[RMDB]
RNA sequence: GGGAACGACUCGAGUAGAGUCGAAAACAUGACCUGCUCUUUGAGGUAAAUUAUUUGCUAGAUUGGCUCAUUGGACUCCUGGAAGUGCUUUGCUUAUGCUUACCCAUUUGUUAAAAGGAAACAGAUGAACAGCCAGAUGAAAGAGAUGCACAGAACAGCUCCAAAUCCUUUUCGAAGGAUUUGGAGCAAAAGAAACAACAACAACAAC
Reactivity to 2A3 in 0.01 (KOAc 150mM, MgCl2 10mM, bicine 150mM(pH8.5), 24C), signal-to-noise 1, nucleotides 027 to 156: c050a020u250g010a050c000c000u000g000c020u040c020u020u020u110g020a090g100g010u050a130a080a080u150u180a090u090u120u120g030c040u020a120g010a140u000u090g050g020c010u000c040a060u030u080g020g020a060c070u040c000c060u060g040g020a080a130g060u020g000c060u080u100u020g000c000u130u000a050u140g000c010u000u020a010c000c000c050a030u000u060u030g030u000u110a110a090a000a000g080g000a030a000a000c020a020g000a020u030g030a060a000c030a030g070c040c030a010g030a120u140g070a010a000a060g150a010g050a040u030g000c040a020c010a050g120a090a010c000a050
About this RNA: Structure probing data (2A3) for a 207-nucleotide construct. The reactions ran in a buffer of 150 mM KOAc, 10 mM MgCl2 and 150 mM bicine (pH 8.5), at 24 C. It was measured as part of the RMDB library OK3TST.